[RMDB]
RNA sequence: GGGAACGACUCGAGUAGAGUCGAAAACGCUCCAGCUUACGCUAAAGCUGCGUGAGUUAAUCUCCUUUUGGAGCUGGACUGAUUAGAAUUUCUAGCGUUUUAAUCGCUCCAUAACCUUAAGCUAGACGCUUUUAAAAGGUGGUUCGCCUUUUAAACUGAGUAUUAGCGUGUUCGCACGCUAAUACUCAAAAGAAACAACAACAACAAC
Reactivity to 2A3 in 0.01 (KOAc 150mM, MgCl2 10mM, bicine 150mM(pH8.5), 24C), signal-to-noise 2, nucleotides 027 to 156: c060g010c010u010c000c010a000g000c000u000u020a010c000g000c030u090a160a070a270g110c160u090g000c040g000u000g020a000g000u010u030a060a070u050c080u130c030c040u030u090u060u050g000g010a000g000c020u000g000g000a000c020u030g000a000u000u000a000g000a010a000u170u000u030c000u000a010g000c000g000u000u000u000u000a000a000u010c000g030c050u000c020c020a080u170a170a130c000c040u100u180a100a000g010c000u000a000g020a020c030g060c010u070u060u030u040a020a020a000a000g000g020u080g050g280u110u260c150g000c000c000u010u000u000u000a030a030a010c070u000

Structure probing data (2A3) for a 207-nucleotide construct. It was measured as part of the RMDB library RSTRND. The 2A3 profile rests on 1,444 reads. The RNA was probed in 150 mM KOAc, 10 mM MgCl2 and 150 mM bicine (pH 8.5) at 24 C.